[RMDB]
RNA sequence: GGGAACGACUCGAGUAGAGUCGAAAAGGCAGGAAUAGAAUGGGCCGAAUCUAGUGUCUCACUGCAGGCCAGAUGCUAUUUUUGUUUGGCGCACGGCCUGGUGGCUGAUGCGGCUGUGUUCUAAGAGCAAUAUUAUUAUUUUCGAAUAAUAAUAUUGAAAAGAAACAACAACAACAAC
Reactivity to 2A3 in 0.01 (KOAc 150mM, MgCl2 10mM, bicine 150mM(pH8.5), 24C), signal-to-noise 5, nucleotides 027 to 126: g080g000c050a010g060g080a060a040u020a040g020a020a020u040g040g020g000c010c010g010a000a010u010c050u070a020g050u010g090u030c030u060c130a030c040u140g030c020a010g000g000c000c000a010g030a050u020g000c010u020a070u050u050u020u070u120g220u110u090u110g010g000c000g000c010a010c000g010g000c020c000u010g010g010u040g010g000c010u010g000a030u010g020c010g010g010c020u040g080u020g010u120u000c000u020a050a040g000a010g120
Reactivity to DMS in 0.01 (KOAc 150mM, MgCl2 10mM, bicine 150mM(pH8.5), 24C), signal-to-noise 9, nucleotides 027 to 126: g000g010c020a040g000g010a070a050u010a010g000a040a030u010g010g000g010c000c000g000a070a060u030c030u030a020g020u010g010u040c130u040c010a040c020u010g010c070a070g010g010c000c000a070g000a110u030g000c010u000a010u010u010u020u030u020g000u010u020u010g010g010c010g030c060a070c030g000g000c000c010u000g000g020u010g000g000c010u000g000a030u000g000c010g000g010c010u010g010u030g010u000u000c010u000a060a120g000a150g010